Structure probing data (2A3 and DMS) for a 177-nucleotide construct. Values are in units of 0.01, from 0 to 300, in steps of 10. The reactions ran in a buffer of 150 mM KOAc, 10 mM MgCl2 and 150 mM bicine (pH 8.5), at 24 C. Source: RMDB library OK1LIB, as collected in RNAgym.
RNA sequence: GGGAACGACUCGAGUAGAGUCGAAAACUGCACACGCUCUGCCCGAAGCUGUGUUGUGUGGGGAGAUCGCACGGUGAGAUGCGAUGAAGCUGGUGCAACUGAGUAUCCGUGAGGAUUUGAAUGCAGGGCGUUUAGCGAGCUUCGGCUUGCUAAGCGCAAAAGAAACAACAACAACAAC
Reactivity to 2A3 in 0.01 (KOAc 150mM, MgCl2 10mM, bicine 150mM(pH8.5), 24C), signal-to-noise 9, nucleotides 027 to 126: c010u010g000c000a010c000a000c020g010c000u010c010u040g030c000c000c000g020a040a010g010c040u030g010u010g020u130u070g010u010g010u040g010g010g000g010a040g000a020u020c010g000c000a000c010g020g010u160g060a100g000a070u020g000c010g010a010u020g020a030a010g000c040u030g010g030u060g010c010a030a030c040u050g030a010g070u070a030u000c000c010g050u100g050a110g020g020a030u040u070u110g110a110a030u080g020c030a020g030g040
Reactivity to DMS in 0.01 (KOAc 150mM, MgCl2 10mM, bicine 150mM(pH8.5), 24C), signal-to-noise 9, nucleotides 027 to 126: c040u000g010c030a040c070a070c070g000c010u010c030u010g000c010c020c020g010a130a070g010c040u010g010u020g000u010u010g010u000g010u020g000g000g000g010a120g000a050u000c020g000c000a030c050g010g020u040g010a150g000a150u010g000c010g010a050u000g000a080a150g000c020u010g010g010u000g010c020a060a120c050u010g000a120g010u010a030u000c000c010g010u040g000a150g010g000a030u000u010u020g010a100a100u020g000c030a040g000g000